Notes:
Chemical mapping of a 207-nucleotide RNA with 2A3. For 2A3, 464 sequencing reads were counted.
RNA sequence: GGGAACGACUCGAGUAGAGUCGAAAAAUUACAUGCAGACAAACAGGAAGUAGUAAAAGAGUGCAAUGAAAUGCCAGAUUGUCAGGUAUCAGUUAUCAAUUGAUAACCAAUACUUUUGCUUUUGACAGUGUCUAGUCAGGUAAUCUUAGAAUUUUAGGCGUAUGCCCCAAUUCGUUGGGGCAUACGCAAAAGAAACAACAACAACAAC
Reactivity to 2A3 in 0.01 (KOAc 150mM, MgCl2 10mM, bicine 150mM(pH8.5), 24C), signal-to-noise 2, nucleotides 027 to 156: a010u040u060a010c040a020u040g000c010a010g010a050c020a020a190a020c000a030g040g070a050a010g040u050a000g020u030a030a000a010a120g030a010g050u200g060c060a040a100u050g070a200a130a130u120g060c000c010a070g070a200u130u140g070u080c050a010g000g010u010a030u100c030a000g000u060u040a050u120c120a200a240u250u120g000a000u020a030a020c000c000a000a070u020a190c010u160u090u050u040g050c000u000u080u160u070g030a030c010a000g050u000g040u170c010u040a060g020u120c010a000g020g010u040a010a030u060c100u100u170a090g140a200a160u130u180u060u160a060g070

It was measured as part of the RMDB library OK3TST. The reactions ran in a buffer of 150 mM KOAc, 10 mM MgCl2 and 150 mM bicine (pH 8.5), at 24 C.